[RMDB]
RNA sequence: GGGAACGACUCGAGUAGAGUCGAAAAGUUGAACAGUCGAAGACCGUGGAAGCCGUAAUGGCACGAAGCGAUCGAAUGGCUGGAUAACGUAAGAGAGGUCAACCCAGAGCCCGUGAAAAGGCGAGCACCUUCACGCUUGUUUCGACAAGCGUGAAGGAAAAGAAACAACAACAACAAC
Reactivity to DMS in 0.01 (KOAc 150mM, MgCl2 10mM, bicine 150mM(pH8.5), 24C), signal-to-noise 1, nucleotides 027 to 126: g020u000u160g000a190a130c040a000g050u000c040g000a300a220g000a000c020c000g010u000g030g000a300a000g000c000c010g000u020a030a060u120g000g060c000a040c120g000a300a300g000c000g000a100u000c040g000a120a250u050g000g000c000u000g000g030a190u020a000a000c000g000u070a060a120g000a160g000a130g020g000u000c070a050a070c010c040c000a000g000a230g000c000c000c000g000u000g000a060a120a020a080g020g050c010g000a020g000c090a100
Reactivity to 2A3 in 0.01 (KOAc 150mM, MgCl2 10mM, bicine 150mM(pH8.5), 24C), signal-to-noise 1, nucleotides 027 to 126: g000u000u000g020a160a000c000a000g000u000c000g060a010a010g000a000c000c000g000u010g050g050a100a000g000c000c140g090u300a300a170u300g000g020c000a000c240g020a000a000g000c000g030a030u020c000g000a010a010u100g000g020c000u000g000g000a020u000a000a000c000g090u100a150a000g060a000g020a030g130g050u060c020a170a000c090c000c000a010g000a010g060c000c000c000g030u040g150a070a060a070a000g030g000c000g000a040g010c040a070

This 177-nucleotide RNA was probed chemically with DMS and 2A3. For 2A3, 638 sequencing reads were counted. High 2A3 reactivity points to a flexible backbone, as in loops and unpaired stretches. 2A3 adducts were read by reverse transcription with SuperScript II with manganese.